[RMDB]
RNA sequence: GGGAACGACUCGAGUAGAGUCGAAAAUUCCAUUUGAGUAUCCUGAAAACGGGCUUUUCAGCAUGGAACGUACAUAUUUAAUAGUAGGAGUGCAUAGUGGCCCGUAUAGCAGGCAUUAACAUUCCUGAAAACGUGAAAAGGUUCGCCUUUUCACGAAUCCCUACUGUAAGUUCGCUUACAGUAGGGAAAAAGAAACAACAACAACAAC
Reactivity to 2A3 in 0.01 (KOAc 150mM, MgCl2 10mM, bicine 150mM(pH8.5), 24C), signal-to-noise 1, nucleotides 027 to 156: u050u010c010c000a010u110u040u170g010a020g010u120a060u090c000c010u000g040a060a050a000a110c030g010g020g020c000u100u060u090u130c020a020g010c050a030u060g100g120a180a020c030g180u110a020c080a080u040a110u210u180u210a270a190u150a040g080u000a030g010g060a070g090u000g000c050a030u060a140g100u060g010g000c000c000c000g000u000a000u000a010g010c010a010g000g100c000a010u060u010a000a020c000a040u050u050c000c000u000g060a030a060a060a000c010g000u000g000a010a000a000a010g020g010u030u080c140g060c000c000u000u000u060u010c040a000c010g000a000a000
Reactivity to DMS in 0.01 (KOAc 150mM, MgCl2 10mM, bicine 150mM(pH8.5), 24C), signal-to-noise 2, nucleotides 027 to 156: u000u000c010c010a200u020u000u050g020a080g020u000a070u000c030c040u000g010a080a080a110a130c080g020g000g120c070u030u000u000u000c040a230g000c020a020u000g050g010a090a110c060g000u000a110c070a100u000a110u020u000u000a090a130u000a170g000u000a070g020g020a270g060u000g020c000a170u000a140g040u000g020g030c000c020c000g000u000a040u000a130g000c010a020g020g000c120a020u020u000a060a100c030a110u000u000c010c000u000g000a070a060a150a150c040g000u000g000a020a020a000a030g010g000u000u000c300g000c010c000u020u030u000u000c020a020c010g000a020a080
This 207-nucleotide RNA was probed chemically with 2A3 and DMS. For DMS, 2,332 sequencing reads were counted.